RNA sequence: GGGAACGACUCGAGUAGAGUCGAAAAGAUAUGGAGCGAACACGGACUUGGAUUUAUGGGAGGACCGUGGUCGGAAACGACCAUUAGUACUCCCAUUGUCAGUCCGGUUCGCUCCUAAGUCAAAACGAUGAUUAGGAGUUCGCUCCUAAUCAUCGAACUUGUCGAUCUAGUUCGCUAGAUCGACAAGAAAAGAAACAACAACAACAAC
Reactivity to DMS in 0.01 (KOAc 150mM, MgCl2 10mM, bicine 150mM(pH8.5), 24C), signal-to-noise 1, nucleotides 027 to 156: g030a110u000a210u010g000g000a080g020c000g040a040a000c010a210c050g030g010a050c030u000u020g050g000a050u030u000u000a000u000g010g030g020a010g040g010a010c030c060g060u000g000g030u010c000g030g000a060a110a270c000g000a040c000c010a110u000u000a040g000u000a040c030u000c000c000c000a000u000u000g000u010c000a060g000u000c010c020g040g000u000u000c000g000c000u000c000c020u000a000a080g000u000c070a080a090a070a190c050g030a030u000g000a040u000u000a070g020g000a010g020u000u000c300g050c000u020c000c000u000a000a000u000c000a000u010c000g000a020a060
Reactivity to 2A3 in 0.01 (KOAc 150mM, MgCl2 10mM, bicine 150mM(pH8.5), 24C), signal-to-noise 5, nucleotides 027 to 156: g020a000u080a040u160g000g020a000g000c010g000a030a000c300a140c300g020g010a010c030u130u260g140g020a060u290u300u130a010u070g010g000g000a010g020g000a000c000c010g000u000g000g000u000c010g010g060a060a080a020c010g000a000c000c000a000u020u030a000g000u000a010c000u000c010c000c000a000u000u000g000u010c000a000g000u010c000c000g000g000u000u000c000g000c010u010c000c000u000a000a000g010u010c000a000a000a020a050c020g000a000u000g000a000u010u000a000g010g000a000g010u080u150c220g150c130u000c010c000u000a010a000u010c000a000u010c010g000a000a000
Conditions: 150 mM KOAc, 10 mM MgCl2 and 150 mM bicine (pH 8.5), 24 C. The record gives the reactivity of an RNA of 207 nucleotides to DMS and 2A3. It was measured as part of the RMDB library RNAMAK. For DMS the reverse transcriptase was MarathonRT.